RNA sequence: GGGAACGACUCGAGUAGAGUCGAAAAGAUAUGGAUGCAUCGACAUUGAGGUCGCAAGUCGGAAACGACUUGAUGACCAAUGAUGUGUCGAGUGCAUCCUAAGUCAAAAGCCGCGUUCGCGCGGCAACUUCUAAAGUUUCUUCGGAAACUUUAGAAGAAAAGAAACAACAACAACAAC
Reactivity to 2A3 in 0.01 (KOAc 150mM, MgCl2 10mM, bicine 150mM(pH8.5), 24C), signal-to-noise 2, nucleotides 027 to 126: g030a010u060a030u140g000g010a000u010g010c000a010u010c010g000a000c000a010u030u150g100a030g040g010u010c010g000c010a020a010g010u000c000g000g030a070a050a030c010g010a000c010u000u040g050a090u080g000a020c000c020a020a180u190g030a090u170g040u000g000u020c010g010a030g060u050g010c010a010u000c000c000u000a000a000g010u000c020a000a000a110a230g000c000c000g030c020g070u030u120c300g000c010g000c010g120g020c010a000a000
Reactivity to DMS in 0.01 (KOAc 150mM, MgCl2 10mM, bicine 150mM(pH8.5), 24C), signal-to-noise 3, nucleotides 027 to 126: g000a030u010a300u010g000g000a010u000g020c000a040u000c000g000a030c000a010u000u000g000a300g030g030u000c000g020c000a010a000g010u000c010g000g020a080a060a130c000g000a030c000u000u000g000a030u010g010a020c010c010a110a130u010g010a080u010g010u000g000u010c000g000a050g020u010g000c000a000u000c000c000u000a010a100g010u010c030a110a110a160a150g010c010c000g020c000g040u010u010c240g010c030g040c010g000g010c000a010a020